[RMDB]
RNA sequence: GGGAACGACUCGAGUAGAGUCGAAAAGGAGUAGAGGUAAAUACCUCCGUCCAACCCCGGGAGGUAAGGGGUUGGGACCCGGAGCAGAUCCAGCUCCGGUCCUUUGGAGUCCAUUUCUCUCGUUGGAGUGAAUAUCUAGGUUCGCCUAGAUAUUCACAAAAGAAACAACAACAACAAC
Reactivity to DMS in 0.01 (KOAc 150mM, MgCl2 10mM, bicine 150mM(pH8.5), 24C), signal-to-noise 2, nucleotides 027 to 126: g000g010a050g050u000a090g000a020g010g020u010a090a100a180u000a180c010c010u000c000c070g000u000c000c020a040a040c010c000c000c010g000g010g010a100g000g000u020a050a280g010g000g000g020u010u000g000g000g010a030c040c020c010g050g010a020g040c010a090g040a180u010c180c160a100g000c010u000c000c010g000g010u000c010c000u000u000u010g020g020a150g000u010c010c030a110u010u000u000c010u000c030u010c060g020u000u010g000g010a240
Reactivity to 2A3 in 0.01 (KOAc 150mM, MgCl2 10mM, bicine 150mM(pH8.5), 24C), signal-to-noise 2, nucleotides 027 to 126: g050g000a010g050u230a050g100a010g000g040u030a170a300a170u130a160c000c010u010c010c000g010u000c000c020a010a010c000c000c010c010g010g030g030a130g050g080u120a060a080g010g000g000g000u000u040g000g010g010a010c000c100c070g000g000a000g000c010a010g060a210u140c110c080a010g010c000u020c000c020g000g010u010c000c010u010u030u090g060g060a030g030u020c020c000a030u010u150u000c030u000c010u040c050g050u090u060g060g030a100
The record gives the reactivity of an RNA of 177 nucleotides to DMS and 2A3.
The RNA was probed in 150 mM KOAc, 10 mM MgCl2 and 150 mM bicine (pH 8.5) at 24 C.
For DMS the reverse transcriptase was MarathonRT.